[RMDB]
RNA sequence: GGGAACGACUCGAGUAGAGUCGAAAAGAAGAGCCGGGCUAACAAAGGUGGGAGGCACCCAACCCUUCGCAAGAGCCGAGUGGGAAGGCUAAGCGAAACCUAGACAAAAUGGUUAUAAAUAAUGCAACGUGUAUUGGUUGUUCGCAACCAAUACACGAAAAGAAACAACAACAACAAC
Reactivity to DMS in 0.01 (KOAc 150mM, MgCl2 10mM, bicine 150mM(pH8.5), 24C), signal-to-noise 2, nucleotides 027 to 126: g000a100a100g040a110g030c050c050g010g010g030c060u010a020a180c130a160a030a050g000g020u000g020g000g000a080g000g000c060a070c020c000c040a110a110c050c040c070u000u010c010g030c010a050a090g010a040g030c020c020g000a100g030u000g040g010g000a180a120g000g010c080u000a020a230g020c010g000a020a010a040c030c040u000a060g000a110c220a070a050a070a050u010g020g000u000u000a150u020a030a040a100u030a040a090u010g020c070a040a080
Reactivity to 2A3 in 0.01 (KOAc 150mM, MgCl2 10mM, bicine 150mM(pH8.5), 24C), signal-to-noise 1, nucleotides 027 to 126: g040a030a020g000a000g000c060c020g050g000g040c020u020a080a030c050a220a070a020g000g000u040g010g020g000a060g000g040c000a050c000c040c000a030a050c010c000c000u000u030c030g000c070a160a030g010a000g160c010c020g030a050g060u170g000g120g000a060a000g020g000c000u040a080a000g010c000g020a000a000a000c050c010u050a030g070a190c110a000a060a020a090u090g010g010u040u040a120u060a090a170a050u220a030a040u150g030c030a050a070
Record summary:
Structure probing data (DMS and 2A3) for a 177-nucleotide construct. Reactivities are rounded to 0.1 and cut off at 0 and 3. The DMS profile rests on 827 reads. In probing experiments dimethyl sulfate is read out at A N1 and C N3, which are open when not base-paired. The RNA was probed in 150 mM KOAc, 10 mM MgCl2 and 150 mM bicine (pH 8.5) at 24 C.